RNA sequence: GGGAACGACUCGAGUAGAGUCGAAAAGAUAUGGAUAGUGAUGCGAUAAGUCGCCAUCGGAAACGAUGGGCGACUUUUGACGCAUACACUAUCCUAAGUCAAAGUCAUCUACUUCGGUAGAUGACAAGCUACCUAAAAACUUCGGUUUUUAGGUAGCAAAAGAAACAACAACAACAAC
Reactivity to DMS in 0.01 (KOAc 150mM, MgCl2 10mM, bicine 150mM(pH8.5), 24C), signal-to-noise 4, nucleotides 027 to 126: g000a030u000a260u000g000g000a000u000a000g010u000g010a030u000g010c000g020a160u010a020a020g030u000c000g020c000c000a040u000c010g020g000a100a040a150c000g020a000u000g020g020g030c010g000a000c010u000u000u000u000g020a260c070g000c000a000u000a090c000a000c000u000a000u000c000c000u000a010a080g000u000c040a110a140a190g000u000c000a010u000c000u000a010c000u000u020c220g020g010u010a010g000a000u000g010a000c000a040a050
Reactivity to 2A3 in 0.01 (KOAc 150mM, MgCl2 10mM, bicine 150mM(pH8.5), 24C), signal-to-noise 3, nucleotides 027 to 126: g020a000u060a020u100g010g000a000u000a000g000u010g010a000u010g000c040g080a150u040a300a010g010u010c010g000c000c000a000u000c000g010g010a030a020a010c000g000a010u050g070g010g000c000g000a010c000u000u000u000u010g010a010c010g000c010a000u090a100c000a000c010u010a010u000c000c000u000a020a000g010u010c050a130a060a070g000u010c000a000u000c000u010a010c000u040u050c250g120g000u000a000g000a000u000g000a000c000a000a000